Structure probing data (DMS and 2A3) for a 177-nucleotide construct.

RNA sequence: GGGAACGACUCGAGUAGAGUCGAAAACGGCCAAGGUCACAUACCAGCGGCCAUCCGGCUCGCGGGACACGAUCACCAUCGUCGGAUUCAGCGUUGCGAGGGUUUCGUCGUCCCAGGACCACACGAAACACCUCUCUCAUUUCGAUGAGAGAGGUGUAAAAGAAACAACAACAACAAC
Reactivity to DMS in 0.01 (KOAc 150mM, MgCl2 10mM, bicine 150mM(pH8.5), 24C), signal-to-noise 4, nucleotides 027 to 126: c180g000g000c000c020a080a300g000g000u000c090a090c210a120u050a130c050c040a100g000c300g010g020c020c030a070u020c080c050g020g010c040u000c060g010c140g000g000g000a050c060a010c010g010a020u000c180a000c000c000a050u000c010g000u010c060g000g050a110u030u030c280a090g000c100g030u030u020g000c060g000a010g000g000g000u000u000u000c000g000u000c150g020u000c010c020c000a060g010g020a010c000c010a160c150a070c100g000a070a050
Reactivity to 2A3 in 0.01 (KOAc 150mM, MgCl2 10mM, bicine 150mM(pH8.5), 24C), signal-to-noise 9, nucleotides 027 to 126: c060g020g000c010c000a040a040g020g000u080c090a070c040a250u270a100c090c010a030g050c010g010g000c000c000a010u020c020c010g020g010c050u050c030g140c080g000g000g010a010c000a000c010g010a020u040c080a020c060c000a050u010c000g080u010c020g020g110a130u230u160c090a070g100c050g120u210u200g010c000g010a010g000g010g000u000u020u020c000g000u000c060g000u000c000c000c000a010g020g000a020c010c010a040c000a010c090g110a040a170
The RNA was probed in 150 mM KOAc, 10 mM MgCl2 and 150 mM bicine (pH 8.5) at 24 C.